[RMDB]
RNA sequence: GGGAACGACUCGAGUAGAGUCGAAAAUGGUGAGCUCCAGGACCCCCAAAAGGAGGGGGGUGGGCCUUGGACCUCCAGGAGCCAUGGGAUCCGUGGAGUACCCGGGAUAUCCCUUCUCCACACUCCUGCUUAUAUAAAUGUUCGCAUUUAUAUAAGCAAAAGAAACAACAACAACAAC
Reactivity to DMS in 0.01 (KOAc 150mM, MgCl2 10mM, bicine 150mM(pH8.5), 24C), signal-to-noise 2, nucleotides 027 to 126: u010g000g000u010g010a120g010c150u000c000c040a060g000g020a150c050c010c010c000c020a040a090a080a110g040g010a060g010g020g020g020g000g010u000g030g020g000c030c020u000u000g030g000a100c180c050u000c020c030a160g010g000a040g000c120c130a060u010g000g010g000a030u000c030c020g000u000g000g000a180g000u010a080c070c000c030g000g000g000a090u010a100u000c010c000c000u000u000c010u010c000c010a150c140a120c100u010c040c040u000
Reactivity to 2A3 in 0.01 (KOAc 150mM, MgCl2 10mM, bicine 150mM(pH8.5), 24C), signal-to-noise 3, nucleotides 027 to 126: u030g000g020u050g040a070g030c070u000c030c010a040g030g030a110c020c000c000c000c010a050a060a040a090g100g030a080g000g040g000g000g000g020u050g040g090g020c000c020u030u100g020g030a040c010c000u010c000c000a010g000g010a010g030c070c080a100u100g060g000g020a020u030c030c040g140u140g000g020a060g060u090a080c020c010c030g020g010g010a060u060a080u160c020c030c000u020u040c000u040c000c000a020c000a020c030u020c010c020u040
Background:
An RNA of 177 nucleotides, treated with DMS and 2A3 and read out base by base. In probing experiments dimethyl sulfate is read out at A N1 and C N3, which are open when not base-paired. 2A3 adducts were read by reverse transcription with SuperScript II with manganese. The DMS profile rests on 1,481 reads. For DMS the reverse transcriptase was MarathonRT.